[RMDB]
RNA sequence: GGGAACGACUCGAGUAGAGUCGAAAAACCUCAGUCUUCGGACUGAGGUGAGCGGAGCAUGGUGGCCGUGGGAACUCCUCCUUGGUGACUAGGGCCCACGGGGUGCGGCACGCUUCGGCGUGCCGAAUUAAUUUACAACUUUCGAGUUGUAAAUUAAAAAAGAAACAACAACAACAAC
Reactivity to 2A3 in 0.01 (KOAc 150mM, MgCl2 10mM, bicine 150mM(pH8.5), 24C), signal-to-noise 2, nucleotides 027 to 126: a000c010c000u010c000a010g020u000c010u040u140c210g180g000a000c000u000g010a000g010g000u000g000a030g010c080g030g020a060g010c050a060u130g050g090u110g060g150c010c000g020u030g020g000g020a080a070c050u050c020c020u030c020c030u060u130g120g030u130g050a040c050u060a030g020g000g030c010c000c010a000c010g010g020g010g000u090g020c020g000g090c010a010c020g040c000u040u040c120g050g000c000g020u010g010c040c020g000a000a000
Reactivity to DMS in 0.01 (KOAc 150mM, MgCl2 10mM, bicine 150mM(pH8.5), 24C), signal-to-noise 3, nucleotides 027 to 126: a030c000c000u000c000a000g010u000c000u000u010c190g030g000a020c000u000g000a010g010g010u000g000a040g010c090g000g000a110g020c060a070u000g020g020u000g010g020c030c020g010u010g010g000g010a050a050c040u000c030c030u000c010c030u010u010g020g010u010g010a080c050u000a030g000g000g000c000c000c010a020c020g000g010g010g020u000g020c020g010g000c000a020c000g020c010u000u010c060g020g020c000g040u010g010c000c000g000a010a030